[RMDB]
RNA sequence: GGGAACGACUCGAGUAGAGUCGAAAACGGUCCUCAGUUCUCUCUAUUCUUUCUUGAAAGAGGAGACUGCUGGACCAAACGCCCGAGCCGGGAUGGGCCGCAUACCGAGCGAAGGAUACCGGUAAGGAAAACACGUGCUUCGGCACGUGUAAAAGAAACAACAACAACAAC
Reactivity to 2A3 in 0.01 (KOAc 150mM, MgCl2 10mM, bicine 150mM(pH8.5), 24C), signal-to-noise 4, nucleotides 027 to 129: c050g010g000u010c000c000u000c000a040g050u190u040c030u000c030u010c050u050a300u150u010c030u030u190u070c080u110u230g030a020a000a000g010a020g080g010a000g000a010c010u000g020c110u020g000g000a000c000c000a030a050a000c010g010c000c000c030g000a010g000c000c000g000g030g020a040u050g020g010g000c000c000g050c000a010u050a170c000c010g040a000g030c020g040a060a010g040g030a020u030a050c020c010g000g020u030a030a020g070g050a060a040a020
Reactivity to DMS in 0.01 (KOAc 150mM, MgCl2 10mM, bicine 150mM(pH8.5), 24C), signal-to-noise 1, nucleotides 027 to 129: c210g010g050u030c020c000u030c010a020g040u050u020c020u080c010u000c000u030a140u040u030c010u030u110u060c160u000u050g000a000a060a010g010a030g000g020a030g020a010c030u010g040c150u020g020g040a000c000c000a000a030a090c190g010c050c000c010g000a200g010c010c040g030g010g000a100u040g000g000g000c090c020g000c100a040u000a110c080c060g050a120g030c040g030a090a100g030g000a070u000a090c070c000g030g010u000a030a040g070g030a100a050a170